[RMDB]
RNA sequence: GGGAACGACUCGAGUAGAGUCGAAAAGGAGUUGUGGUAGCAUUUGUGGUGGCGGUCAUGGUGGUAGCAGUCAUUCUCCACAGCGGUCUGAUGAGUCGCAGUGUACGUGUGUGCUGUGGAGUUCUCAGAAACCUUUUAUUUGUUUUCUAGAACCCGCAGUCUAAAGGAUGUUCGCAUCCUUUAGACUAAAAGAAACAACAACAACAAC
Reactivity to DMS in 0.01 (KOAc 150mM, MgCl2 10mM, bicine 150mM(pH8.5), 24C), signal-to-noise 2, nucleotides 027 to 156: g000g000a110g050u010u010g020u000g030g020u000a070g000c050a100u000u000u010g030u010g010g020u020g010g030c050g050g040u000c040a040u000g000g050u020g020g000u010a110g000c080a100g030u030c050a090u000u010c050u000c020c020a040c060a090g040c030g000g000u000c030u000g020a110u000g000a200g030u010c050g000c010a130g040u000g020u000a070c040g020u000g030u020g030u000g020c000u020g020u000g020g010a050g010u010u010c020u000c090a050g010a050a020a070c040c030u000u010u000u000a140u020u060u010g010u010u000u010u000c030u000a080g020a060a120c000c000c030g000c160
Reactivity to 2A3 in 0.01 (KOAc 150mM, MgCl2 10mM, bicine 150mM(pH8.5), 24C), signal-to-noise 3, nucleotides 027 to 156: g000g020a040g000u040u070g010u130g050g070u060a020g040c030a060u030u090u150g050u050g040g040u020g000g000c040g030g020u030c030a040u050g020g020u040g010g020u040a010g010c040a010g020u030c000a010u120u020c030u010c020c010a030c000a020g000c030g050g030u070c020u060g060a120u090g020a060g040u060c000g000c040a020g000u030g020u140a040c080g050u120g040u050g040u040g050c040u010g000u000g010g020a020g020u010u000c000u000c000a010g040a090a040a030c020c000u040u140u090u080a180u110u120u080g030u010u060u020u070c020u040a030g020a110a060c020c000c040g060c050
This 207-nucleotide RNA was probed chemically with DMS and 2A3. DMS adducts were read by reverse transcription with MarathonRT. The data come from the RNA Mapping Database (RMDB), library OK3TST. For DMS, 5,441 sequencing reads were counted. Reactivities are given for positions 27 through 156. The reactions ran in a buffer of 150 mM KOAc, 10 mM MgCl2 and 150 mM bicine (pH 8.5), at 24 C.